[RMDB]
An RNA of 177 nucleotides, treated with 2A3 and read out base by base. For 2A3 the reverse transcriptase was SuperScript II with manganese.

RNA sequence: GGGAACGACUCGAGUAGAGUCGAAAAGGAGUCGUAUUUGCCCCACGGGCGGUAAACCUCGCGGUGCAUGUGGUGCUCAUGGCGUCCGUCGGCCUUGAUCUUCUCCACCACCUUUUUCACGUCCUGCGCCCUACGUGGACUUCGGUCCACGUAGGGCAAAAGAAACAACAACAACAAC
Reactivity to 2A3 in 0.01 (KOAc 150mM, MgCl2 10mM, bicine 150mM(pH8.5), 24C), signal-to-noise 2, nucleotides 027 to 126: g030g000a000g000u020c060g010u060a200u030u140u090g090c010c030c010c000a060c060g010g010g000c000g000g020u090a030a020a050c020c010u070c010g060c060g010g010u030g000c050a070u100g050u080g100g070u050g060c000u000c050a020u050g030g000c000g050u030c000c010g010u020c050g060g000c000c000u060u030g040a100u070c030u040u010c040u030c020c010a040c000c000a010c030c000u030u080u000u050u020c100a070c060g010u010c020c000u080g000c030

Source: RMDB library OK1LIB, as collected in RNAgym.